Chemical mapping of a 207-nucleotide RNA with 2A3. For 2A3, 938 sequencing reads were counted. Conditions: 150 mM KOAc, 10 mM MgCl2 and 150 mM bicine (pH 8.5), 24 C.

RNA sequence: GGGAACGACUCGAGUAGAGUCGAAAACGUGGUGGAGCUGCACUUUUAAGGCCUGCUCUCCGAGGCUCAUGGCGUGGCCGUGAAAUGAGCUACUGGGGUAAGUGUGUGUUUUCGAGUGAAAGUUGCCGUGGGUGAUCUCGCGCCAUAUUUUGGCCGACACCAGUACUAGCUUCGGCUAGUACUGGUGAAAAGAAACAACAACAACAAC
Reactivity to 2A3 in 0.01 (KOAc 150mM, MgCl2 10mM, bicine 150mM(pH8.5), 24C), signal-to-noise 2, nucleotides 027 to 156: c020g020u050g090g000u030g030g070a000g000c020u060g030c060a080c050u060u070u060u190a190a050g050g000c030c060u050g000c020u040c020u000c050c000g030a200g020g000c000u000c060a030u020g040g010c070g160u140g030g000c020c010g000u020g040a010a090a050u110g000a000g030c080u080a150c070u080g000g020g080g000u070a100a130g010u070g000u000g000u010g000u060u070u010u000c090g020a050g000u040g040a140a070a000g050u020u040g010c020c040g010u040g010g030g060u060g030a100u050c000u020c070g020c030g050c040c000a040u100a240u120u180u070u020g030g010c010c000g030a020